[RMDB]
RNA sequence: GGGAACGACUCGAGUAGAGUCGAAAAUUAUAAUAGCGGCGCUAUCAGAAAUUCAACGCUAUCAAAUUUUGAUGGUGAUGGGAACGGCGCUAGCAACAAACAUAUUUUAUGUACCUCACGUGUUUGAAAGGUAUUACAGGUUCGCCUGUAAUACCUUAAAAGAAACAACAACAACAAC
Reactivity to 2A3 in 0.01 (KOAc 150mM, MgCl2 10mM, bicine 150mM(pH8.5), 24C), signal-to-noise 3, nucleotides 027 to 126: u000u020a070u050a180a210u110a090g000c000g000g000c000g000c000u030a010u160c070a120g230a170a220a050u120u040c030a010a040c000g000c020u000a000u000c010a020a160a100u300u300u150u020g000a000u000g000g000u040g020a130u060g040g010g050a070a020c070g010g000c000g000c000u020a100g010c000a010a030c030a000a100a000c020a040u100a080u010u080u090u030a080u170g070u110a110c010c010u060c000a060c140g040u030g050u050u000u000g090a070
Reactivity to DMS in 0.01 (KOAc 150mM, MgCl2 10mM, bicine 150mM(pH8.5), 24C), signal-to-noise 2, nucleotides 027 to 126: u000u000a120u000a090a100u000a250g010c020g000g000c000g000c010u000a150u010c080a130g010a080a080a080u060u000c040a070a060c010g020c000u000a000u000c000a010a150a200u080u000u000u010g000a010u000g000g080u030g000a140u000g010g000g000a060a090c060g000g000c000g020c020u020a050g030c010a070a060c160a010a110a030c170a040u000a010u010u020u030u010a130u060g050u030a060c020c020u000c140a100c250g000u010g010u000u000u000g020a040
This 177-nucleotide RNA was probed chemically with 2A3 and DMS. The RNA was probed in 150 mM KOAc, 10 mM MgCl2 and 150 mM bicine (pH 8.5) at 24 C.